[RMDB]
RNA sequence: GGGAACGACUCGAGUAGAGUCGAAAAAAUUGAUGCAAGGUGUGGAGCGACCUUAAACAGUUCUGGUGGUGCUCUGAAUGGAGUGCUCUACUGAGAUUAUAAAAUAGAAGGUAAGCUAUUCUCUCUUAAAACGCAAUAGAGUUCGCUCUAUUGCGAAGAACAUCGUAGGGUUCGCCCUACGAUGUUCAAAAGAAACAACAACAACAAC
Reactivity to 2A3 in 0.01 (KOAc 150mM, MgCl2 10mM, bicine 150mM(pH8.5), 24C), signal-to-noise 2, nucleotides 027 to 156: a000a020u180u140g020a080u080g030c040a020a000g060g010u080g010u120g040g000a010g000c000g000a010c010c000u030u050a170a030a010c010a010g010u040u000c030u050g050g060u020g000g020u040g000c000u000c050u110g230a060a010u260g010g000a010g010u040g020c000u010c030u080a030c030u040g020a050g000a080u120u130a020u200a060a010a100a010u050a030g080a060a000g140g010u120a140a000g000c010u010a090u120u000c010u010c000u000c000u070u030a090a190a050a000c000g000c000a000a000u000a000g020a000g010u020u100c080g040c100u030c000u000a000u000u000g010c000g000a010a000

This 207-nucleotide RNA was probed chemically with 2A3. Conditions: 150 mM KOAc, 10 mM MgCl2 and 150 mM bicine (pH 8.5), 24 C. The 2A3 profile rests on 750 reads.